Chemical mapping of a 207-nucleotide RNA with 2A3 and DMS. The reactions ran in a buffer of 150 mM KOAc, 10 mM MgCl2 and 150 mM bicine (pH 8.5), at 24 C. Values are in units of 0.01, from 0 to 300, in steps of 10.
[RMDB]
RNA sequence: GGGAACGACUCGAGUAGAGUCGAAAACUAUCUUCCAAAGGAAGAUGGACAACUGCUUUUCACGAUACAGCGAUUUCAUUGCUGUAUACAUUGAUGACAUAUUGGUGUUUUCUGAGAGUGAAAGAGACCAUGAGAAGCAUCUCAGAGUUAUGCUUCAGACAAACACUUUGUUCGCAAAGUGUUUGUCAAAAGAAACAACAACAACAAC
Reactivity to 2A3 in 0.01 (KOAc 150mM, MgCl2 10mM, bicine 150mM(pH8.5), 24C), signal-to-noise 4, nucleotides 027 to 156: c010u010a000u000c000u010u010c000c010a220a020a040g030g000a000a000g000a000u020g010g000a070c090a140a030c070u080g020c020u110u060u080u100c030a020c040g050a010u010a000c000a000g030c010g090a100u170u120u300c110a100u100u160g000c000u000g020u010a010u010a030c020a110u080u210g020a040u050g020a000c020a020u150a120u220u220g150g000u030g020u030u070u060u000c030u050g030a040g010a020g130u030g040a050a050a040g080a010g000a030c020c010a050u160g040a030g000a150a000g040c010a040u030c060u040c110a070g040a010g150u090u030a050u030g000c000u020u000c010a000
Reactivity to DMS in 0.01 (KOAc 150mM, MgCl2 10mM, bicine 150mM(pH8.5), 24C), signal-to-noise 1, nucleotides 027 to 156: c020u000a050u000c020u000u000c000c010a150a070a210g030g010a030a000g000a050u010g020g020a140c090a110a100c040u000g030c030u030u000u000u000c050a000c020g000a270u000a020c000a000g030c000g030a030u000u000u000c140a090u000u000g000c020u000g020u000a020u000a010c110a050u000u000g010a130u000g010a200c040a130u000a160u000u040g010g010u000g000u020u000u000u000c000u000g000a120g010a100g020u030g000a100a030a120g000a190g020a070c030c040a120u000g010a110g000a060a050g040c060a030u000c030u020c050a110g010a150g010u000u000a040u000g040c030u000u000c000a080